RNA sequence: GGGAACGACUCGAGUAGAGUCGAAAAAAUGACACACUUAGCAGCAUCUUGAACCAAACCGAGUGGAGAAUGCUCCAUCGGUAAUGUACGGUGCAUUGGAAUCAAGGUCUUAUCAUGUACAUUAGCCUGGUAUCACCCCAUUCGUGGGGUGAUACCAAAAAGAAACAACAACAACAAC
Reactivity to DMS in 0.01 (KOAc 150mM, MgCl2 10mM, bicine 150mM(pH8.5), 24C), signal-to-noise 1, nucleotides 027 to 126: a000a010u030g000a180c010a000c080a040c030u030u000a000g000c100a000g000c070a000u000c030u020u030g000a140a170c010c100a000a160a090c100c020g010a060g000u080g000g000a000g110a250a150u250g000c090u030c000c030a020u050c000g000g000u000a000a110u010g060u130a020c030g000g000u100g010c020a140u000u090g000g000a010a090u050c030a000a010g050g000u000c000u020u000a000u040c050a000u000g080u040a000c000a010u000u000a000g000c080c000
Structure probing data (DMS) for a 177-nucleotide construct. DMS (dimethyl sulfate) methylates the pairing face of unpaired adenines and cytosines. It was measured as part of the RMDB library OK1LIB. For DMS, 1,035 sequencing reads were counted.